[RMDB]
RNA sequence: GGGAACGACUCGAGUAGAGUCGAAAAGUCUUGCGGUCAGAGAAGCGCUUGACAGUCGCAUCGGCGUUGUGAGCGUUGUAGAAGGCGACCAGUUCUUUCAUUUCUGCGUUCUGGAUGUCGCCGAAGGCGUGCCUGCCUCCUUCGGGAGGCAGGCACGAAAAGAAACAACAACAACAAC
Reactivity to DMS in 0.01 (KOAc 150mM, MgCl2 10mM, bicine 150mM(pH8.5), 24C), signal-to-noise 1, nucleotides 027 to 126: g000u000c020u010u000g030c050g000g030u000c130a140g000a130g000a160a190g000c040g010c030u010u000g020a010c020a070g010u000c050g000c030a150u020c150g040g000c030g040u030u000g010u000g000a070g000c060g000u000u000g000u040a110g000a120a120g020g000c020g000a030c030c030a100g000u010u000c020u010u010u010c120a130u010u000u000c090u000g000c290g010u010u000c000u020g030g000a170u020g000u000c000g030c000c020g000a090a050g010g000
Reactivity to 2A3 in 0.01 (KOAc 150mM, MgCl2 10mM, bicine 150mM(pH8.5), 24C), signal-to-noise 2, nucleotides 027 to 126: g010u010c000u030u000g030c040g000g150u110c080a050g080a010g050a300a060g030c020g000c040u080u040g050a040c020a030g090u100c060g000c040a070u130c060g250g000c040g050u060u030g030u060g060a060g030c000g010u020u010g010u060a040g010a240a070g030g000c020g000a010c030c000a000g000u000u040c020u070u230u130c030a210u050u180u140c120u170g000c020g010u060u020c000u000g120g040a160u120g050u090c010g000c010c020g010a030a000g070g080